[RMDB]
Overview: Chemical mapping of a 177-nucleotide RNA with DMS and 2A3. The DMS profile rests on 6,133 reads. Reactivities are given for positions 27 through 126. Reactivities are rounded to 0.1 and cut off at 0 and 3. The data come from the RNA Mapping Database (RMDB), library OK1LIB.
RNA sequence: GGGAACGACUCGAGUAGAGUCGAAAAAAUGCGGAUCGUUUGUCUGGGGUAUGCGGUUCCUCCUUCUCGGUGUCCUCUCCGAACCAGCUUUCUUCACCUCCGCUGCGGAAAUACCUCAAAAAUGUUCCGUCCUUUUACUAUUCGUAGUAAAAGGACGAAAAGAAACAACAACAACAAC
Reactivity to DMS in 0.01 (KOAc 150mM, MgCl2 10mM, bicine 150mM(pH8.5), 24C), signal-to-noise 3, nucleotides 027 to 126: a050a020u040g020c070g000g010a040u020c060g020u000u020u020g010u040c080u020g000g000g030g000u000a010u010g000c090g010g000u000u010c020c010u010c060c010u000u010c020u030c050g020g020u030g010u020c020c020u010c030u010c010c030g000a040a080c080c050a090g000c050u010u010u030c060u020u010c030a050c040c020u000c040c030g030c050u000g010c030g000g010a060a040a050u010a030c020c020u020c070a010a060a040a060a080u030g010u000u000c080
Reactivity to 2A3 in 0.01 (KOAc 150mM, MgCl2 10mM, bicine 150mM(pH8.5), 24C), signal-to-noise 6, nucleotides 027 to 126: a000a010u220g000c050g020g010a030u050c070g050u050u070u080g150u050c050u050g050g010g020g000u050a060u100g070c030g010g000u050u040c000c000u020c000c000u090u040c040u030c030g080g010u030g020u050c010c000u020c000u010c020c010g040a050a050c030c010a020g030c000u050u080u040c020u050u070c020a070c020c010u020c020c020g020c040u060g000c030g020g050a050a060a020u090a040c000c010u040c000a050a080a020a040a060u120g050u070u010c020